[RMDB]
Annotation: The record gives the reactivity of an RNA of 177 nucleotides to DMS and 2A3. For 2A3, 4,162 sequencing reads were counted. Source: RMDB library TTRDEL, as collected in RNAgym. Conditions: 150 mM KOAc, 10 mM MgCl2 and 150 mM bicine (pH 8.5), 24 C.
RNA sequence: GGGAACGACUCGAGUAGAGUCGAAAAGAUAUGGAACUGAACUACACCCGAAGUCAGCGACGAUCUCGGAAACGAGGGAGCUGCCUAAGGUGCAGUUCCUAAGUCAAAACGUCUGUUCGCAGACGAAUCGCAUUAAUGUGUUCGCACAUUAAUGCGAAAAAGAAACAACAACAACAAC
Reactivity to DMS in 0.01 (KOAc 150mM, MgCl2 10mM, bicine 150mM(pH8.5), 24C), signal-to-noise 3, nucleotides 027 to 126: g020a080u000a300u000g000g000a050a020c010u010g010a100a060c060u020a300c000a020c000c000c010g000a130a170g000u000c000a000g020c000g000a100c290g000a020u000c000u010c010g000g000a080a120a140c000g010a030g020g000g000a030g010c000u000g000c040c000u000a240a080g020g020u000g020c020a000g000u000u010c000c010u000a030a150g000u010c070a070a050a110a170c000g000u000c000u000g010u010u020c220g010c020a000g000a030c010g000a040a050
Reactivity to 2A3 in 0.01 (KOAc 150mM, MgCl2 10mM, bicine 150mM(pH8.5), 24C), signal-to-noise 2, nucleotides 027 to 126: g000a020u070a080u180g010g000a000a000c010u010g020a060a020c030u190a040c220a020c040c010c000g030a040a010g030u040c010a010g020c000g150a260c000g000a090u000c010u000c000g030g010a130a080a080c020g000a000g000g000g010a010g010c020u010g010c000c010u030a030a000g000g020u010g000c000a000g000u000u000c010c000u020a110a020g060u010c030a010a010a080a120c010g020u000c010u010g020u100u170c300g040c100a010g000a020c010g030a030a080